[RMDB]
The record gives the reactivity of an RNA of 177 nucleotides to 2A3. Conditions: 150 mM KOAc, 10 mM MgCl2 and 150 mM bicine (pH 8.5), 24 C. For 2A3, 347 sequencing reads were counted. High 2A3 reactivity points to a flexible backbone, as in loops and unpaired stretches. Source: RMDB library OK1LIB, as collected in RNAgym.
RNA sequence: GGGAACGACUCGAGUAGAGUCGAAAAUUUGGGAGAUCAAAAUUAUGACUUCAUGUUCCAAAGCAGCAUUCUCUUUGCUCAGGCAGUCUGUGCAGAUGACGUUUUAAAUGGAGAGGAUCGCAUAAUCACAUGUCUCCGCCUUCGGGCGGAGACAUGUAAAAGAAACAACAACAACAAC
Reactivity to 2A3 in 0.01 (KOAc 150mM, MgCl2 10mM, bicine 150mM(pH8.5), 24C), signal-to-noise 1, nucleotides 027 to 126: u220u090u110g000g000g020a000g110a080u080c080a000a180a000a000u290u130a160u180g030a000c060u030u030c020a130u030g000u000u000c000c000a080a130a160g090c020a000g100c000a050u200u000c130u020c000u000u300u260g000c040u080c050a000g100g070c030a130g000u000c000u000g030u000g000c000a000g030a300u060g000a050c060g150u080u080u080u100a110a110a000u160g220g000a010g050a000g000g000a000u000c110g000c050a000u000a000a050u090c020